RNA sequence: GGGAACGACUCGAGUAGAGUCGAAAAGGAGUGCUACCGAAAGGUAGCACUCCAACAAAUCGGUGUAAAUGCAGCCCGCUUUACACCGUGCGGCACAGCGGAAACGCUGAUGUCGUAUAAAGGGCUAAUCAUUUAAUCAGUUCGCUGAUUAAAUGAUAAAAGAAACAACAACAACAAC
Reactivity to DMS in 0.01 (KOAc 150mM, MgCl2 10mM, bicine 150mM(pH8.5), 24C), signal-to-noise 5, nucleotides 027 to 126: g020g020a040g040u010g010c010u000a010c000c000g010a120a100a190g010g020u000a000g010c000a000c010u000c000c000a030a060c100a060a100a060u010c010g000g010u000g000u000a000a000a010u000g010c090a080g000c000c000c000g010c300u000u000u000a010c000a010c000c000g010u010g010c000g020g000c000a020c000a010g000c000g000g010a150a070a210c000g020c000u000g000a040u000g040u000c000g020u000a040u010a060a120a050g020g010g000c010u000a140
Reactivity to 2A3 in 0.01 (KOAc 150mM, MgCl2 10mM, bicine 150mM(pH8.5), 24C), signal-to-noise 2, nucleotides 027 to 126: g020g000a010g000u000g020c000u010a000c000c000g060a070a090a080g000g000u000a000g000c000a000c000u000c000c000a000a000c000a000a010a010u100c000g000g000u000g000u010a020a020a010u080g020c010a000g010c020c000c000g010c000u010u000u010a000c000a000c010c000g000u050g000c010g000g000c000a000c000a010g000c000g010g030a070a050a010c010g000c010u000g000a090u010g000u000c000g000u000a000u030a010a070a010g010g000g000c010u010a030

Notes
The record gives the reactivity of an RNA of 177 nucleotides to DMS and 2A3. The DMS profile rests on 8,311 reads. The reactions ran in a buffer of 150 mM KOAc, 10 mM MgCl2 and 150 mM bicine (pH 8.5), at 24 C. The 2A3 profile rests on 14,199 reads.